Structure probing data (2A3) for a 177-nucleotide construct. The 2A3 profile rests on 1,194 reads. The data come from the RNA Mapping Database (RMDB), library OK1LIB.
RNA sequence: GGGAACGACUCGAGUAGAGUCGAAAAGCUCCUGGCGGGUGGCGGUGAACGCCGGCGCCGACUCGACCGGCCGGCUCAUGGAGCAUCUGCGGGCGCUGGAAGCCACGCGCGGCGCGCUACUGGAGCGGUUACGCUAGCGGUUCGCCGCUAGCGUAACAAAAGAAACAACAACAACAAC
Reactivity to 2A3 in 0.01 (KOAc 150mM, MgCl2 10mM, bicine 150mM(pH8.5), 24C), signal-to-noise 2, nucleotides 027 to 126: g010c000u000c000c010u020g040g020c020g030g150g010u070g160g000c020g000g020u000g010a080a030c070g030c050c000g000g000c000g000c010c030g070a110c040u100c070g050a060c020c020g010g010c050c000g050g030c000u050c030a300u200g140g000a020g020c000a050u040c020u070g020c050g090g000g000c030g000c000u030g010g050a100a050g020c040c000a030c000g190c000g000c000g090g000c110g010c000g010c060u030a060c170u110g000g000a030g010c000g000